[RMDB]
RNA sequence: GGGAACGACUCGAGUAGAGUCGAAAAUGAUGGUUCGCCAUCAAUAUGAGCGUACUACCAGCAAGCCGCGUCCUGGAGGUAGCUCCCAAAUAGGAGCUACCUGCGAAGGGACGGCGGUGAUGACCUGGUAUCGCAGUCCAGCGCUUUCGAGCGCUAAUGGUUCAAAGUAUUUCGAUACUUUGAACCAAAAAGAAACAACAACAACAAC
Reactivity to 2A3 in 0.01 (KOAc 150mM, MgCl2 10mM, bicine 150mM(pH8.5), 24C), signal-to-noise 2, nucleotides 027 to 156: u030g010a000u020g000g030u080u060c250g070c040c000a010u040c040a000a040u300a140u240g170a100g010c000g010u060a110c050u000a010c040c000a020g000c040a110a080g000c000c000g000c010g000u000c010c020u050g010g000a000g000g020u000a000g000c020u060c000c010c020a190a300a090u300a060g020g000a000g000c000u000a000c000c000u020g090c010g000a000a010g000g000g000a000c020g110g040c020g030g000u020g010a070u090g010a030c040c000u000g020g000u060a040u300c000g000c010a000g000u000c040c010a020g010c000g010c000u050u070u160c250g070a040g020c020g000c000u010a050a090
Reactivity to DMS in 0.01 (KOAc 150mM, MgCl2 10mM, bicine 150mM(pH8.5), 24C), signal-to-noise 2, nucleotides 027 to 156: u000g000a030u010g000g010u010u010c300g050c010c000a010u000c020a090a110u000a150u000g010a120g010c050g020u000a070c160u000a060c010c000a010g020c030a170a300g000c020c000g020c020g020u000c020c010u000g040g020a040g020g030u000a000g010c010u000c000c000c010a030a160a240u000a050g020g010a010g000c010u000a000c000c010u000g010c100g020a260a270g000g010g010a020c000g000g010c010g000g030u000g010a070u000g010a110c260c000u030g010g010u010a020u000c030g090c020a170g010u000c020c050a050g020c020g020c010u000u010u020c230g070a000g040c010g020c000u000a040a080